Annotation
This 207-nucleotide RNA was probed chemically with 2A3 and DMS. As a SHAPE reagent, 2A3 marks flexible, mostly unpaired nucleotides at the ribose 2'-OH. The reactions ran in a buffer of 150 mM KOAc, 10 mM MgCl2 and 150 mM bicine (pH 8.5), at 24 C. 2A3 adducts were read by reverse transcription with SuperScript II with manganese.
RNA sequence: GGGAACGACUCGAGUAGAGUCGAAAAACAACAGAUAGCUGGAACCAGCGUAGAAUUCUACGCAUAUCCAUAGCGAAUGGUACCUGUAAAGAAAAUAAUGAGUGAUGUACAAGUACCAACAGUACUCAAUGCCAUGGUGAUGUCAAUCACAUAUGCAUAUGGUGAUACCAUUCGUGGUAUCACCAUAAAAAGAAACAACAACAACAAC
Reactivity to 2A3 in 0.01 (KOAc 150mM, MgCl2 10mM, bicine 150mM(pH8.5), 24C), signal-to-noise 6, nucleotides 027 to 156: a000c030a000a010c010a010g100a130u120a050g020c010u020g030g000a110a150c110c070a060g000c010g000u000a000g070a180a260u300u030c000u010a010c000g000c010a030u030a030u050c020c020a030u130a040g000c010g060a050a030u060g010g000u020a010c000c020u040g020u080a060a070a040g160a040a100a040a050u280a030a080u130g050a040g110u100g080a060u080g030u050a010c010a020a060g010u000a030c020c000a020a040c020a030g070u090a040c050u020c090a020a050u060g010c000c040a030u060g010g050u010g000a000u040g130u170c060a050a070u010c010a010c010a040u120a010u050g010c010a010
Reactivity to DMS in 0.01 (KOAc 150mM, MgCl2 10mM, bicine 150mM(pH8.5), 24C), signal-to-noise 3, nucleotides 027 to 156: a110c050a090a080c100a090g030a070u010a100g010c030u000g000g000a100a090c140c080a130g050c020g020u000a000g010a240a220u000u000c030u000a020c030g000c000a140u000a090u000c020c050a060u030a050g020c010g020a130a190u010g000g000u000a020c020c000u000g000u010a030a050a090g020a150a070a070a090u010a100a100u000g010a140g020u010g040a120u000g000u000a040c040a030a050g010u000a030c010c010a030a130c130a160g040u000a050c060u000c040a070a100u010g010c010c090a040u000g020g030u010g020a060u010g010u000c130a070a100u000c070a030c010a100u010a060u010g000c050a190